[RMDB]
RNA sequence: GGGAACGACUCGAGUAGAGUCGAAAAGAUAUGGAAUUGGUCAACAGCGAUAUGUCGGAAACGACAUCAUCGACAUGACCUGUUCCUAAGUCAAACUAUGCCAUUCGGUUCGCCGAAUGGCAUAGAACCAGUGUAUCGUGUUCGCACGAUACACUGGAAAAGAAACAACAACAACAAC
Reactivity to 2A3 in 0.01 (KOAc 150mM, MgCl2 10mM, bicine 150mM(pH8.5), 24C), signal-to-noise 2, nucleotides 027 to 126: g010a010u010a000u010g010g000a010a000u020u060g000g010u020c030a060a080c140a300g080c000g000a000u010a000u010g000u000c000g000g000a000a010a010c000g010a000c020a000u030c050a000u000c010g240a300c120a130u010g000a010c000c000u010g020u010u030c000c000u000a020a010g000u000c010a020a030a120c020u010a000u010g000c000c000a010u020u000c010g030g050u070u130c300g020c110c000g000a000a010u000g010g000c010a000u010a010g010a000a010
Reactivity to DMS in 0.01 (KOAc 150mM, MgCl2 10mM, bicine 150mM(pH8.5), 24C), signal-to-noise 2, nucleotides 027 to 126: g000a010u010a100u010g000g000a000a010u000u000g000g010u000c000a030a260c300a130g000c040g020a010u000a020u000g030u020c000g010g000a010a020a050c000g010a010c000a000u000c160a000u000c000g010a080c160a120u000g000a020c000c000u000g020u010u000c000c000u020a000a090g000u000c000a130a090a210c010u000a000u000g000c000c000a000u000u000c000g010g020u000u020c200g020c000c000g000a000a000u000g010g000c000a000u000a010g020a060a180
Background
The record gives the reactivity of an RNA of 177 nucleotides to 2A3 and DMS. It was measured as part of the RMDB library TTRDEL. The DMS profile rests on 2,138 reads. The reactions ran in a buffer of 150 mM KOAc, 10 mM MgCl2 and 150 mM bicine (pH 8.5), at 24 C. For 2A3, 4,624 sequencing reads were counted. For 2A3 the reverse transcriptase was SuperScript II with manganese.